[RMDB]
Chemical mapping of a 177-nucleotide RNA with DMS.

RNA sequence: GGGAACGACUCGAGUAGAGUCGAAAAAGGGGCAUCUAAACUAGGGCUGAUCAUCAAGAAAGAAGAGACCAUGUGUAGUUAUGACUUCCUCAUCUAUGGAAAAACCCCUUUGUUUAGAGGUAACAUAAGUAAAUGGUUGGUUCGCCAACCAUUUACUAAAAGAAACAACAACAACAAC
Reactivity to DMS in 0.01 (KOAc 150mM, MgCl2 10mM, bicine 150mM(pH8.5), 24C), signal-to-noise 2, nucleotides 027 to 126: a080g000g020g010g010c040a090u000c010u020a040a040a040c040u000a060g000g000g000c060u000g000a230u000c030a060u010c090a110a040g010a050a150a060g000a070a040g010a060g010a070c060c010a060u010g000u000g010u000a090g050u000u000a040u010g000a070c110u000u000c020c030u000c070a120u000c070u000a080u010g010g000a030a040a020a100a100c190c000c000c040u000u000u010g000u000u000u000a040g000a010g010g010u000a040a120c120a070u010a070

Values cover nucleotides 27 to 126.
The RNA was probed in 150 mM KOAc, 10 mM MgCl2 and 150 mM bicine (pH 8.5) at 24 C.
Source: RMDB library OK2TST, as collected in RNAgym.